[RMDB]
An RNA of 177 nucleotides, treated with DMS and 2A3 and read out base by base. The 2A3 profile rests on 1,720 reads. Source: RMDB library RFMREP, as collected in RNAgym.
RNA sequence: GGGAACGACUCGAGUAGAGUCGAAAAGGGCGCUGUUCUUCUCAUUUUUGAAUUUAUGAAAAGUAAGUUGGCACCACCUUUUCCCAAUUCCCAUAUCAAACAGAAAAAAACGCACCUGCCCUUUGGCCUUCUACAUUCAGUUCGCUGAAUGUAGAAGAAAAGAAACAACAACAACAAC
Reactivity to DMS in 0.01 (KOAc 150mM, MgCl2 10mM, bicine 150mM(pH8.5), 24C), signal-to-noise 2, nucleotides 027 to 126: g010g000g010c070g010c130u000g010u000u010c010u000u000c030u010c020a040u010u000u000u010u000g000a150a180u030u010u010a050u020g000a030a040a020a040g020u000a070a050g010u010u010g010g020c020a040c120c030a060c020c010u000u000u000u010c020c050c030a120a290u000u000c010c000c000a140u010a070u000c100a080a040a070c150a070g000a010a010a070a100a120a050a050c120g000c060a020c040c030u000g000c050c010c040u000u010u000g010g000c170
Reactivity to 2A3 in 0.01 (KOAc 150mM, MgCl2 10mM, bicine 150mM(pH8.5), 24C), signal-to-noise 2, nucleotides 027 to 126: g000g020g000c090g010c020u040g060u080u080c020u040u020c010u000c000a070u010u090u050u050u130g180a260a140u070u170u180a130u140g030a070a040a010a010g020u080a030a040g010u050u110g050g000c010a020c010c000a060c010c020u060u010u050u000c040c010c000a020a040u020u000c000c000c000a010u030a030u100c110a100a060a060c050a040g200a120a090a020a020a020a000a050c060g000c010a010c000c020u050g050c060c030c000u050u080u080g030g010c010